The record gives the reactivity of an RNA of 177 nucleotides to 2A3 and DMS. Conditions: 150 mM KOAc, 10 mM MgCl2 and 150 mM bicine (pH 8.5), 24 C. The DMS profile rests on 5,288 reads. For 2A3 the reverse transcriptase was SuperScript II with manganese. DMS adducts were read by reverse transcription with MarathonRT.
RNA sequence: GGGAACGACUCGAGUAGAGUCGAAAAGCAUAGCGUCAACUUGGUUGACCAGAAGUCUGGUUAGCAAACAGAGUAAAACCAAAAGGUUAGACGCACUCUGUGAAAAAGUACGAAAGUACAAAGAUAAAGUAGAAUUGUUAUUCGUAACAAUUCUACUAAAAGAAACAACAACAACAAC
Reactivity to 2A3 in 0.01 (KOAc 150mM, MgCl2 10mM, bicine 150mM(pH8.5), 24C), signal-to-noise 5, nucleotides 027 to 126: g050c010a050u080a130g010c000g010u010c030a080a120c100u070u110g090g000u010u040g020a000c010c000a010g040a300a040g160u150c030u010g000g000u020u030a010g010c040a110a110a020c020a020g040a000g050u090a020a200a020a040c010c020a080a220a150a050g040g000u040u030a040g010a000c010g010c000a010c000u010c000u030g020u000g060a130a070a040a020a010g000u010a000c010g030a110a030a000g010u010a010c070a020a070a010g100a080u210a090a170
Reactivity to DMS in 0.01 (KOAc 150mM, MgCl2 10mM, bicine 150mM(pH8.5), 24C), signal-to-noise 5, nucleotides 027 to 126: g010c100a080u000a100g020c010g000u000c030a080a120c090u010u000g030g010u000u000g000a020c010c000a030g010a290a170g010u000c010u000g020g010u000u000a040g000c030a140a110a050c020a040g000a030g000u000a050a060a070a060c010c010a090a080a100a150g010g000u000u010a080g010a040c040g000c030a100c030u000c000u000g010u000g000a040a070a090a060a100g000u010a010c010g000a080a060a140g010u000a010c010a040a070a090g010a100u010a070a100